[RMDB]
RNA sequence: GGGAACGACUCGAGUAGAGUCGAAAAGGAUGGGUUGCACAUCACGUCUAAGUUCGGAUGGGAAAGCAUGCAGUCUCCAGGAGGAAGCGUACGCCAUCCGAAACGUACGGCAUGCGAAAGGAUGGCCAUCCGAAACGUACGCAACGGAUGGGAAAGCGCUUGUACAAAGAUUCGUCUUUGUACAAGCAAAAGAAACAACAACAACAAC
Reactivity to 2A3 in 0.01 (KOAc 150mM, MgCl2 10mM, bicine 150mM(pH8.5), 24C), signal-to-noise 5, nucleotides 027 to 156: g070g010a100u120g040g060g000u070u120g040c050a060c010a090u060c020a020c050g030u020c060u110a100a120g000u020u010c010g010g010a010u020g020g010g080a030a100a030g010c020a020u030g000c020a010g060u020c020u030c090c050a040g030g050a030g040g030a130a050g010c010g030u020a020c040g030c020c030a090u010c010c010g010a030a020a000c030g030u060a010c020g000g010c030a010u030g010c020g070a170a070a030g110g020a070u150g060g050c010c000a010u000c000c010g010a010a000a000c010g010u030a010c030g000c010a020a020c020g020g000a010u040g010g030g050a070a060a040g130c110
Reactivity to DMS in 0.01 (KOAc 150mM, MgCl2 10mM, bicine 150mM(pH8.5), 24C), signal-to-noise 2, nucleotides 027 to 156: g020g010a080u000g010g030g000u020u010g020c050a060c030a120u000c050a090c030g000u030c080u010a070a170g000u010u030c020g030g020a030u020g000g000g000a110a160a160g020c010a020u000g020c000a110g000u010c040u000c050c080a160g040g000a220g010g010a110a060g010c030g010u000a050c050g010c020c020a050u020c020c030g020a010a040a000c000g020u010a030c020g020g020c020a170u000g020c010g010a090a100a110g010g020a140u000g000g000c000c020a030u010c000c010g020a010a060a020c010g000u000a020c080g000c000a110a200c030g000g010a010u000g010g010g000a030a050a130g000c220
Annotation
Chemical mapping of a 207-nucleotide RNA with 2A3 and DMS. The DMS profile rests on 4,919 reads. It was measured as part of the RMDB library OK3TST. The reactions ran in a buffer of 150 mM KOAc, 10 mM MgCl2 and 150 mM bicine (pH 8.5), at 24 C.